[RMDB]
RNA sequence: GGGAACGACUCGAGUAGAGUCGAAAAGCGUACUACAUUAGCUGCCUGGGAGCCAACAGCCUAUAUUAUCUUUAUCCCAAAUAGGAUAAAGGGGUAUAGGACAUGGCUCCCAGAUGCUAAUGUAUCGCAAAGUGGUGUAAGUUCGCUUACACCACAACCGAUUUUCUUAGUUCGCUAAGAAAAUCGGAAAAGAAACAACAACAACAAC
Reactivity to 2A3 in 0.01 (KOAc 150mM, MgCl2 10mM, bicine 150mM(pH8.5), 24C), signal-to-noise 2, nucleotides 027 to 156: g000c000g000u060a120c070u000a000c040a000u000u000a000g000c000u040g170c030c000u010g000g000g010a000g000c000c000a110a060c090a230g020c000c000u010a040u010a040u120u050a300u060c000u000u000u000a000u030c000c000c010a210a300a210u280a140g000g000a000u000a000a000a000g000g000g000g000u000a000u000a000g000g020a030c010a040u000g000g000c000u000c010c000c000a010g000a000u000g000c000u000a000a000u000g000u000a010u070c000g000c040a110a070a030g010u010g000g000u000g000u000a010a010g000u010u080c180g020c190u000u000a000c000a000c000c000a000c000a000a000
This 207-nucleotide RNA was probed chemically with 2A3.
The 2A3 profile rests on 1,809 reads.
Conditions: 150 mM KOAc, 10 mM MgCl2 and 150 mM bicine (pH 8.5), 24 C.
It was measured as part of the RMDB library RNAMAK.